The record gives the reactivity of an RNA of 177 nucleotides to 2A3 and DMS. It was measured as part of the RMDB library OK2TST. 2A3 adducts were read by reverse transcription with SuperScript II with manganese. Conditions: 150 mM KOAc, 10 mM MgCl2 and 150 mM bicine (pH 8.5), 24 C.

RNA sequence: GGGAACGACUCGAGUAGAGUCGAAAAUGUAGCUAAGAGCUUGCUUUCAAGCAUGAGGAGCUAAGUUUAGUACUCAGACUGUGUAAUAAAAACCAGGCGUGGUGGUGCAUACUUGCAAUACCAGUGCGACUGAGUAGUACUUCGGUACUACUCAGUCAAAAGAAACAACAACAACAAC
Reactivity to 2A3 in 0.01 (KOAc 150mM, MgCl2 10mM, bicine 150mM(pH8.5), 24C), signal-to-noise 2, nucleotides 027 to 126: u090g000u010a020g020c010u040a020a110g080a070g140c010u020u060g020c000u090u190u190c090a090a050g040c020a070u070g040a040g120g020a030g020c010u020a030a020g000u050u030u100a020g000u020a050c010u000c090a010g010a030c030u040g040u050g050u190a070a110u100a120a170a020a020a020c020c000a030g000g040c030g060u040g010g010u030g040g000u010g010c020a020u080a230c040u100u040g010c020a030a020u010a040c040c010a030g060u040g110c000
Reactivity to DMS in 0.01 (KOAc 150mM, MgCl2 10mM, bicine 150mM(pH8.5), 24C), signal-to-noise 3, nucleotides 027 to 126: u010g010u000a040g010c020u000a120a110g020a100g000c010u000u010g010c160u010u000u020c110a040a080g010c010a070u010g010a090g010g010a070g010c010u000a040a090g010u000u000u000a090g010u010a130c030u000c050a150g000a110c050u000g000u000g020u000a050a070u020a050a070a100a110a070c010c010a030g000g000c050g030u000g020g000u000g000g010u010g000c020a040u000a090c190u010u010g000c020a070a070u010a060c020c020a060g020u000g010c090